The record gives the reactivity of an RNA of 207 nucleotides to DMS and 2A3. Conditions: 150 mM KOAc, 10 mM MgCl2 and 150 mM bicine (pH 8.5), 24 C. For DMS, 2,959 sequencing reads were counted. DMS adducts were read by reverse transcription with MarathonRT.
[RMDB]
RNA sequence: GGGAACGACUCGAGUAGAGUCGAAAAUAAAGGUUCGCCUUUAAUAGCUGGGGUCCAUCGAUCGAUCGCGUAGCUUUGAUCAUACUGAAGCCUCCACGGUAUGGGAGCUACGCGAUCGGGAGGACGGAGGCACCCUACUUUUGUGUUUCGACACAAAUUAUUACUUCUACUUCGGUAGAAGUAAUAAAAAAGAAACAACAACAACAAC
Reactivity to DMS in 0.01 (KOAc 150mM, MgCl2 10mM, bicine 150mM(pH8.5), 24C), signal-to-noise 1, nucleotides 027 to 156: u010a050a000a060g030g070u000u020c250g000c000c020u000u020u000a080a130u000a070g000c070u000g000g000g020g040u000c010c000a130u000c060g010a090u000c000g020a030u000c000g000c000g020u000a020g050c020u000u000u000g030a170u000c000a090u000a030c000u020g020a030a120g040c050c000u000c020c050a300c080g010g000u010a020u010g000g010g000a030g000c010u010a020c030g000c000g050a000u000c000g000g000g010a130g020g020a030c020g010g030a060g030g040c020a160c010c020c030u000a040c080u000u000u000u010g000u000g010u000u030u000c090g010a060c040a070c040a050a050a130
Reactivity to 2A3 in 0.01 (KOAc 150mM, MgCl2 10mM, bicine 150mM(pH8.5), 24C), signal-to-noise 2, nucleotides 027 to 156: u090a040a020a010g040g020u090u130c200g120c010c000u070u060u060a190a140u170a160g060c120u090g000g020g010g040u050c020c030a130u230c070g080a100u020c010g000a000u000c000g000c010g010u000a000g010c000u300u160u040g040a060u050c010a000u000a010c000u040g080a220a030g040c000c010u000c000c000a000c030g000g000u000a000u000g010g010g000a010g000c000u000a000c020g000c010g000a000u000c000g000g010g000a030g000g000a010c020g000g000a010g000g000c000a010c020c010c010u130a180c080u000u130u080u060g010u010g020u040u110u090c160g100a000c010a000c010a100a050a050